Chemical mapping of a 177-nucleotide RNA with DMS and 2A3.

RNA sequence: GGGAACGACUCGAGUAGAGUCGAAAAGAUUCGGCCAUGUAACCCAUGCCGCCGAACAGCUGUACGGCCUGGUUGGCAACCCACUCCCCGGCCUGCACGGCGGUGUUCUUGGCGAAACACACCUGCGGUUACGCAGGCUCUUCGGAGCCUGCGUAACAAAAGAAACAACAACAACAAC
Reactivity to DMS in 0.01 (KOAc 150mM, MgCl2 10mM, bicine 150mM(pH8.5), 24C), signal-to-noise 2, nucleotides 027 to 126: g000a160u000u000c000g000g030c000c010a030u000g020u010a130a100c160c300c120a070u000g000c060c000g000c000c000g000a070a090c100a170g030c210u000g030u010a010c090g060g010c020c010u010g010g000u000u000g000g030c080a110a150c080c020c030a220c080u010c040c000c000c110g010g020c020c010u010g000c030a040c000g000g000c000g000g000u000g000u000u000c000u000u000g000g020c040g000a000a080a100c110a110c170a110c040c020u000g030c090g000
Reactivity to 2A3 in 0.01 (KOAc 150mM, MgCl2 10mM, bicine 150mM(pH8.5), 24C), signal-to-noise 1, nucleotides 027 to 126: g030a020u000u070c040g120g000c060c010a030u030g060u090a060a080c070c050c040a090u180g000c000c010g000c010c000g000a170a070c070a100g090c050u050g000u080a050c150g030g010c010c000u010g050g000u050u060g050g000c120a130a130c030c000c020a020c040u000c010c020c000c000g010g010c000c010u020g070c000a050c070g010g000c000g030g060u050g020u000u000c030u000u020g080g000c030g000a020a050a010c110a010c030a020c030c010u070g010c040g090
The data come from the RNA Mapping Database (RMDB), library OK2TST. 2A3 adducts were read by reverse transcription with SuperScript II with manganese. As a SHAPE reagent, 2A3 marks flexible, mostly unpaired nucleotides at the ribose 2'-OH. The RNA was probed in 150 mM KOAc, 10 mM MgCl2 and 150 mM bicine (pH 8.5) at 24 C.